[RMDB]
RNA sequence: GGGAACGACUCGAGUAGAGUCGAAAAAAAGUAAUUUAAGCUAUUGAUAUACUGCUGACUAUCUUUUUUAUGAUAAUUAAGAGUUAUCAAUCGCCUUUCAGCUAGUGAUUCAAAAGAUGUUAUCAUAUUACUCUCCGAUGAAACCUAAAGUUAGCAAGUGCUUAUUAUGAUUCGUCAUAAUAAGCACAAAAGAAACAACAACAACAAC
Reactivity to DMS in 0.01 (KOAc 150mM, MgCl2 10mM, bicine 150mM(pH8.5), 24C), signal-to-noise 1, nucleotides 027 to 156: a030a070a070g000u000a140a110u000u000u000a090a060g010c000u000a020u010u020g010a030u000a060u010a050c000u000g000c020u000g010a030c010u000a010u000c000u000u000u020u000u000u000a070u060g000a020u000a000a010u000u000a040a010g010a170g020u000u000a030u000c010a010a000u010c080g070c020c020u000u000u000c090a070g020c070u010a060g010u000g000a110u000u010c030a080a060a140a120g000a090u010g000u000u010a070u000c060a170u030a090u000u000a040c000u010c070u010c010c100g020a200u000g000a060a060a070c010c020u010a020a050a110g010u000u000a040g060c050a060a210
Reactivity to 2A3 in 0.01 (KOAc 150mM, MgCl2 10mM, bicine 150mM(pH8.5), 24C), signal-to-noise 3, nucleotides 027 to 156: a000a000a000g110u100a090a120u080u140u080a050a000g000c000u000a010u010u000g010a000u030a010u020a060c000u020g240c010u010g030a010c000u000a040u070c000u080u300u150u100u150u170a070u300g000a010u010a060a070u120u060a080a020g010a000g020u000u000a000u010c000a010a010u010c010g020c010c000u080u160u100c050a010g000c010u090a020g020u060g090a070u060u080c060a010a090a040a040g070a040u050g000u070u040a080u120c030a020u040a060u150u060a040c030u050c020u040c040c040g060a080u080g070a070a060a080c030c050u100a120a130a070g060u040u040a040g070c040a180a090